Conditions: 150 mM KOAc, 10 mM MgCl2 and 150 mM bicine (pH 8.5), 24 C. Chemical mapping of a 177-nucleotide RNA with DMS and 2A3. The 2A3 profile rests on 498 reads.
RNA sequence: GGGAACGACUCGAGUAGAGUCGAAAAUAGUUCCGUUUGAAAGCGCGCCCUAGUGCGCCGUUUGUCGAAAGGGAAGCCGGUUAAUAUUCCGGCACCUGGAUGUGGAUUCUCCACGGCAACGUAACUGGAAGCAACCAUACUUCGGUAUGGUUGCUUCAAAAGAAACAACAACAACAAC
Reactivity to DMS in 0.01 (KOAc 150mM, MgCl2 10mM, bicine 150mM(pH8.5), 24C), signal-to-noise 2, nucleotides 027 to 126: u070a080g020u000u000c010c020g020u030u000u040g010a050a090a180g010c070g050c050g000c010c090c200u030a060g030u010g000c030g100c040c010g000u000u000u030g020u020c000g040a050a080a060g000g000g000a200a060g000c000c000g000g000u020u010a100a130u050a240u010u040c000c000g010g020c020a010c000c010u000g000g000a150u010g000u010g000g000a240u030u020c180u000c000c000a030c020g000g000c130a010a010c010g020u020a060a040c090u050g090
Reactivity to 2A3 in 0.01 (KOAc 150mM, MgCl2 10mM, bicine 150mM(pH8.5), 24C), signal-to-noise 1, nucleotides 027 to 126: u190a000g030u060u000c030c000g040u140u070u200g260a080a030a040g160c050g000c000g000c000c030c060u120a040g000u050g100c000g000c030c000g000u000u000u100g150u050c010g040a080a000a080g000g000g050a170a110g000c020c000g000g000u030u100a100a050u070a090u300u070c000c000g000g000c000a000c000c000u000g090g000a100u000g010u030g000g090a030u300u030c030u050c020c000a000c000g000g010c000a010a010c030g010u010a050a020c090u040g000
Overview
DMS (dimethyl sulfate) methylates the pairing face of unpaired adenines and cytosines.